[RMDB]
Notes: This 177-nucleotide RNA was probed chemically with DMS and 2A3. For 2A3, 2,994 sequencing reads were counted.
RNA sequence: GGGAACGACUCGAGUAGAGUCGAAAAGCGCGCAGGGAUCGCACGAGCCGGGCGGUCGCGGCCUGAUCGGGGGCGUAGUACCGGUACCCGGUGGUCGCGUCGACGACGGCCGGGACCAGCACGCCCAAUAUACUGCCAUCUUCGGAUGGCAGUAUAUAAAAGAAACAACAACAACAAC
Reactivity to DMS in 0.01 (KOAc 150mM, MgCl2 10mM, bicine 150mM(pH8.5), 24C), signal-to-noise 4, nucleotides 027 to 126: g000c050g000c060g050c050a100g010g000g000a050u000c030g010c060a100c080g010a130g020c100c050g010g000g030c040g010g020u000c030g020c060g010g000c030c030u000g010a080u010c090g010g000g010g000g000c000g020u000a060g030u000a120c110c050g000g000u000a120c010c000c010g020g030u000g000g030u000c010g010c030g000u010c210g000a110c010g010a020c010g000g000c010c000g000g000g000a040c010c010a040g000c080a030c020g010c000c000c000a080
Reactivity to 2A3 in 0.01 (KOAc 150mM, MgCl2 10mM, bicine 150mM(pH8.5), 24C), signal-to-noise 2, nucleotides 027 to 126: g020c030g010c000g000c070a060g050g000g090a040u050c020g020c060a050c060g020a070g150c070c040g020g000g000c030g000g020u050c050g010c040g130g020c000c040u100g040a100u130c070g120g000g060g000g020c010g000u060a110g010u030a140c060c040g040g000u210a300c000c000c000g000g000u040g090g030u020c010g000c010g180u190c110g040a280c010g000a000c000g060g000c030c000g000g010g020a010c010c000a010g020c000a000c010g010c000c000c000a000
Annotation
As a SHAPE reagent, 2A3 marks flexible, mostly unpaired nucleotides at the ribose 2'-OH. For 2A3 the reverse transcriptase was SuperScript II with manganese. The reactions ran in a buffer of 150 mM KOAc, 10 mM MgCl2 and 150 mM bicine (pH 8.5), at 24 C. It was measured as part of the RMDB library OK2TRN.